[RMDB]
RNA sequence: GGGAACGACUCGAGUAGAGUCGAAAAUGAUUGAAACUAAAUCAUGUGCGCUAAGUUGUCCCGAAAGUAUCUUUGGAUUUCUACAAAACAGUGUUCCUUCUUUAGGAUGCUGAUCCGUAGAGAUCUGUCGUGAUCAGUUGUUCGCAACUGAUCACGAAAAAGAAACAACAACAACAAC
Reactivity to DMS in 0.01 (KOAc 150mM, MgCl2 10mM, bicine 150mM(pH8.5), 24C), signal-to-noise 2, nucleotides 027 to 126: u000g000a010u000u000g000a160a110a180c160u040a070a080a010u000c020a000u000g010u000g040c050g000c130u020a090a160g000u000u000g000u000c000c010c000g020a030a090a100g000u020a030u020c050u020u010u030g010g000a020u000u010u000c000u000a010c010a020a110a040a110c050a000g000u000g000u020u000c000c020u000u010c300u090u040u010a070g020g010a020u000g000c000u000g010a020u020c300c300g000u000a000g000a020g000a010u000c010u000g010

Structure probing data (DMS) for a 177-nucleotide construct. The RNA was probed in 150 mM KOAc, 10 mM MgCl2 and 150 mM bicine (pH 8.5) at 24 C. It was measured as part of the RMDB libraries RFM100 and RFMREP. Reactivities are rounded to 0.1 and cut off at 0 and 3. Values cover nucleotides 27 to 126.